[RMDB]
RNA sequence: GGGAACGACUCGAGUAGAGUCGAAAACUACUCUUCUUUCCCUUCUCUCGUCUUCCUCGGUCAACCUCCGGAGUUCCUCUUCCUCCUCCUUGCUGAGUGACUUUCCUCCCGCGCUCAGCUGCUUCUUGCCAGACUAGCUUCGGCUAGUCUAAAAGAAACAACAACAACAAC
Reactivity to DMS in 0.01 (KOAc 150mM, MgCl2 10mM, bicine 150mM(pH8.5), 24C), signal-to-noise 9, nucleotides 027 to 129: c000u020a040c000u000c010u010u000c050u010u010u010c000c020c020u030u040c020u000c020u020c050g020u020c050u040u030c050c040u020c010g000g020u030c040a090a130c110c040u000c020c020g020g030a050g000u020u010c040c020u010c050u000u030c030c000u020c010c010u010c020c050u040u050g030c010u020g030a030g000u000g030a100c070u010u030u030c020c000u010c000c030c060g010c000g020c030u030c030a060g000c030u010g030c080u020u030c040u000u000g030c120c180
Reactivity to 2A3 in 0.01 (KOAc 150mM, MgCl2 10mM, bicine 150mM(pH8.5), 24C), signal-to-noise 6, nucleotides 027 to 129: c030u060a030c010u010c010u060u030c010u030u040u050c000c000c000u060u030c040u000c020u010c010g060u010c020u080u030c020c010u040c020g020g030u070c040a080a090c010c010u020c010c010g020g000a050g020u010u020c000c000u010c000u030u020c010c000u000c000c000u020c000c010u020u060g010c000u000g010a020g010u030g040a100c010u090u100u070c010c010u020c000c010c010g000c010g000c010u010c010a010g020c010u040g000c000u020u020c010u020u010g050c010c030

An RNA of 170 nucleotides, treated with DMS and 2A3 and read out base by base.
Reactivities are given for positions 27 through 129.
For DMS, 81,122 sequencing reads were counted.
In probing experiments dimethyl sulfate is read out at A N1 and C N3, which are open when not base-paired.
Source: RMDB library 15KLIB, as collected in RNAgym.
The RNA was probed in 150 mM KOAc, 10 mM MgCl2 and 150 mM bicine (pH 8.5) at 24 C.